[RMDB]
The record gives the reactivity of an RNA of 177 nucleotides to 2A3 and DMS. Source: RMDB library OK1LIB, as collected in RNAgym. For DMS the reverse transcriptase was MarathonRT. 2A3 is a SHAPE reagent: it acylates the 2'-hydroxyl of flexible nucleotides of all four kinds.
RNA sequence: GGGAACGACUCGAGUAGAGUCGAAAAUGUAUAUAAAUGCUUCGAACAUGUCUGAAUCGACUCCUUUAAUUGACCACUAGCUAUUGUAAGUGAAAACUUACAAUUUGUCAUUAGUUUACAUAUAAAAGAGUUAACUACCUUUCGAGGUAGUUAACUCAAAAGAAACAACAACAACAAC
Reactivity to 2A3 in 0.01 (KOAc 150mM, MgCl2 10mM, bicine 150mM(pH8.5), 24C), signal-to-noise 4, nucleotides 027 to 126: u150g040u030a100u040a040u050a170a130a060u180g060c030u000u070c050g020a040a030c030a060u070g050u010c010u040g070a060a030u030c000g010a010c020u070c020c000u110u110u080a060a110u170u110g100a110c040c050a000c030u020a020g020c020u020a010u000u000g000u000a000a020g010u020g090a070a080a020a000c000u000u000a000c000a000a000u100u040u080g030u010c040a060u010u040a020g020u030u120u100a130c080a060u140a010u090a150a140a020a020
Reactivity to DMS in 0.01 (KOAc 150mM, MgCl2 10mM, bicine 150mM(pH8.5), 24C), signal-to-noise 2, nucleotides 027 to 126: u020g000u050a040u020a030u030a040a170a090u000g010c130u010u010c040g000a150a050c070a040u000g000u000c060u000g000a110a080u000c030g000a010c120u010c010c010u030u060u000a180a030u000u020g000a160c050c070a100c100u020a100g000c090u010a010u000u010g000u000a010a010g040u000g020a080a020a120a040c000u000u000a000c010a000a000u040u000u000g010u000c020a090u040u000a100g010u000u010u070a070c080a130u030a100u010a040a070a130a060